This 177-nucleotide RNA was probed chemically with DMS and 2A3. Conditions: 150 mM KOAc, 10 mM MgCl2 and 150 mM bicine (pH 8.5), 24 C. 2A3 adducts were read by reverse transcription with SuperScript II with manganese. DMS adducts were read by reverse transcription with MarathonRT. For DMS, 21,113 sequencing reads were counted.

[RMDB]
RNA sequence: GGGAACGACUCGAGUAGAGUCGAAAAACAUGACCAUCAAAAAUAACUGCAUACCGGAUCCCACAAGAAUGGAUAGCAGCAUCGACUUAGAUGGGGUUCUACAAUCAUGCAGAGACGCUGCUCAGCCACUGCAUACUUAUUUCGAUAAGUAUGCAGUAAAAGAAACAACAACAACAAC
Reactivity to DMS in 0.01 (KOAc 150mM, MgCl2 10mM, bicine 150mM(pH8.5), 24C), signal-to-noise 8, nucleotides 027 to 126: a090c100a100u020g010a130c040c010a070u020c070a050a080a060a110a070u030a080a130c020u000g000c010a020u010a090c150c110g000g000a070u000c000c000c020a030c120a040a060g000a090a080u040g010g000a090u010a050g010c080a040g010c050a090u010c060g010a080c080u020u010a070g000a110u000g000g000g010g010u000u010c040u010a060c220a080a060u030c120a020u000g000c080a020g000a120g000a080c080g010c020u000g000c030u010c080a060g010c090c080
Reactivity to 2A3 in 0.01 (KOAc 150mM, MgCl2 10mM, bicine 150mM(pH8.5), 24C), signal-to-noise 9, nucleotides 027 to 126: a010c080a090u170g060a070c020c010a050u190c090a030a080a100a050a040u160a100a080c010u010g000c010a010u030a140c040c050g020g000a020u030c000c020c010a020c020a010a040g110a090a060u130g100g030a050u070a080g070c050a000g020c010a040u070c030g140a110c030u070u100a060g070a210u120g010g000g010g010u030u020c020u070a120c100a090a110u130c040a040u070g010c010a010g040a020g010a080c050g010c020u030g010c020u020c040a030g030c030c020